[RMDB]
RNA sequence: GGGAACGACUCGAGUAGAGUCGAAAAGCAAGAGUCAAUUUACUUGAAAAUGAAGGUUCGGCUCAAGUUGUUUCACGUCCGACCCUGCUAACACAAGAAAAUGCCCAAGCGGUGAUUGAUCACCAUGGAAAUUCAUCUUAUUCGUAAGAUGAAUUUCAAAAGAAACAACAACAACAAC
Reactivity to 2A3 in 0.01 (KOAc 150mM, MgCl2 10mM, bicine 150mM(pH8.5), 24C), signal-to-noise 3, nucleotides 027 to 126: g030c030a030a060g030a020g140u090c050a070a120u100u130u100a100c030u030u070g030a080a050a110a130u110g040a070a030g020g000u030u030c020g010g000c020u010c070a030a040g020u010u040g020u020u110u080c070a040c030g020u000c010c000g010a020c020c000c000u010g010c020u050a080a030c040a000c010a110a000g030a050a130a050a030u080g010c000c010c010a040a020g080c100g030g010u020g010a050u070u190g060a110u120c000a000c000c010a010u050g110
Reactivity to DMS in 0.01 (KOAc 150mM, MgCl2 10mM, bicine 150mM(pH8.5), 24C), signal-to-noise 6, nucleotides 027 to 126: g010c060a080a150g010a080g000u020c070a130a060u000u000u000a080c020u010u010g000a060a100a110a120u000g000a090a050g010g010u000u000c020g010g020c080u000c090a070a090g020u000u000g000u000u000u000c040a120c140g000u000c020c000g000a050c040c010c010u000g010c040u000a060a080c240a120c050a030a050g010a060a040a050a060u000g010c010c010c010a080a100g010c110g010g010u000g010a060u000u000g000a110u000c020a010c010c010a150u010g010
This 177-nucleotide RNA was probed chemically with 2A3 and DMS. Reactivities are given for positions 27 through 126. The DMS profile rests on 6,677 reads. For 2A3, 5,692 sequencing reads were counted.